[RMDB]
RNA sequence: GGGAACGACUCGAGUAGAGUCGAAAACAAACAAGAAAACGGCAGUACGGUAAAUCUGCCGAUACCGUAAGCCUGCAGCCUAAAACAAAUGGCGAUCGUCAACAGGCAAGACGUUAACAAAACAAAACGUGACUCCAGUAUUCGUACUGGAGUCACGAAAAGAAACAACAACAACAAC
Reactivity to 2A3 in 0.01 (KOAc 150mM, MgCl2 10mM, bicine 150mM(pH8.5), 24C), signal-to-noise 2, nucleotides 027 to 126: c020a000a030a000c000a000a050g230a010a110a000a010c020g000g000c030a000g060u100a000c020g080g090u300a180a060a000u060c060u040g000c000c000g010a000u000a000c000c000g010u030a050a050g020c000c000u020g010c020a000g010c050c030u020a000a000a240a000c140a020a000a100u260g000g000c120g000a040u000c110g100u040c000a020a010c000a000g000g000c030a000a010g170a000c020g000u010u050a030a000c090a210a050a000a000c030a000a090a000a010
Reactivity to DMS in 0.01 (KOAc 150mM, MgCl2 10mM, bicine 150mM(pH8.5), 24C), signal-to-noise 1, nucleotides 027 to 126: c050a030a030a230c160a140a080g000a000a100a100a100c040g000g000c000a000g000u000a040c070g000g000u000a000a050a180u090c020u000g020c080c000g000a000u000a000c300c000g030u000a050a070g000c000c000u000g000c050a280g000c000c000u000a040a000a040a000c300a000a080a210u050g040g000c010g000a110u000c090g160u000c280a120a270c000a020g200g000c000a140a000g180a000c040g000u000u000a000a180c180a210a040a020a000c130a040a200a000a110
Overview: Structure probing data (2A3 and DMS) for a 177-nucleotide construct. Values cover nucleotides 27 to 126. High 2A3 reactivity points to a flexible backbone, as in loops and unpaired stretches. It was measured as part of the RMDB library OK1LIB. The DMS profile rests on 734 reads. DMS adducts were read by reverse transcription with MarathonRT.